[RMDB]
RNA sequence: GGGAACGACUCGAGUAGAGUCGAAAAUAACCAGGCAAAAGUUUAAAUGGUCAGUCAUGUUAUCUAGUAAAAUGCUGUCCAAAGACUAUCGAGUAACUCGCAGCGUACUGGACUUGGUGAUGCCUGAGUAUAAAUGCCGGUUCGCCGGCAUUUAUACAAAAGAAACAACAACAACAAC
Reactivity to DMS in 0.01 (KOAc 150mM, MgCl2 10mM, bicine 150mM(pH8.5), 24C), signal-to-noise 2, nucleotides 027 to 126: u030a120a100c000c000a050g020g020c090a060a090a110a050g010u000u000u010a090a120a120u000g000g010u010c000a020g000u020c030a020u000g010u000u010a040u010c110u000a150g010u030a020a060a090a020u000g010c010u000g010u010c010c020a030a070a070g010a060c020u010a100u010c050g010a040g030u000a030a100c100u000c170g010c130a070g010c130g030u000a030c040u000g000g000a040c070u000u010g000g000u000g010a100u000g000c040c000u010g010a110
Reactivity to 2A3 in 0.01 (KOAc 150mM, MgCl2 10mM, bicine 150mM(pH8.5), 24C), signal-to-noise 1, nucleotides 027 to 126: u110a020a020c010c000a000g030g010c000a050a000a160a040g000u060u110u190a200a150a060u030g000g000u010c000a000g040u050c000a000u010g060u090u130a130u080c110u130a100g070u110a150a110a050a000u050g000c000u000g030u000c010c000a050a090a000g070a050c030u040a030u130c110g080a030g050u100a130a100c020u020c130g070c060a060g040c030g070u040a020c040u060g000g070a100c040u050u000g060g000u050g030a040u090g080c000c000u000g000a000